[RMDB]
RNA sequence: GGGAACGACUCGAGUAGAGUCGAAAAUUAUAUAGCGUGUGCAAGACGCUGAACUUGCCAUGAUCUGGAACUUUAGUGCUGUGGUCCGAGUUCCAGAUCAUCAUUUCGGACCUCAGCACUAAUAUAAGAUAUACCGAAGAUUCGUCUUCGGUAUAUCAAAAGAAACAACAACAACAAC
Reactivity to DMS in 0.01 (KOAc 150mM, MgCl2 10mM, bicine 150mM(pH8.5), 24C), signal-to-noise 5, nucleotides 027 to 126: u010u010a100u010a170u010a050g000c010g030u000g000u000g020c020a030a030g010a090c050g010c150u010g020a080a070c030u000u000g000c020c040a020u010g000a110u000c050u010g020g010a100a120c200u000u000u000a020g010u000g000c000u000g000u000g000g000u000c000c000g000a030g010u000u000c080c070a090g010a040u000c110a040u000c070a060u000u010u000c000g010g010a020c000c000u000c020a010g010c010a010c020u000a000a010u000a070u010a060a120
Reactivity to 2A3 in 0.01 (KOAc 150mM, MgCl2 10mM, bicine 150mM(pH8.5), 24C), signal-to-noise 4, nucleotides 027 to 126: u130u030a070u020a060u100a160g050c020g000u020g090u090g020c020a020a010g010a020c030g040c300u050g020a080a050c010u010u020g000c000c010a030u020g030a110u080c040u070g060g060a040a100c040u040u030u000a010g000u000g000c000u000g010u000g010g010u000c000c000g010a020g010u060u040c070c000a010g030a010u030c010a010u010c000a020u050u090u010c000g000g000a000c010c000u010c010a000g000c010a000c000u000a000a020u010a000u010a030a020
Description: The record gives the reactivity of an RNA of 177 nucleotides to DMS and 2A3. For DMS the reverse transcriptase was MarathonRT. Reactivities are given for positions 27 through 126. Conditions: 150 mM KOAc, 10 mM MgCl2 and 150 mM bicine (pH 8.5), 24 C. The 2A3 profile rests on 8,180 reads. The DMS profile rests on 9,376 reads. For 2A3 the reverse transcriptase was SuperScript II with manganese.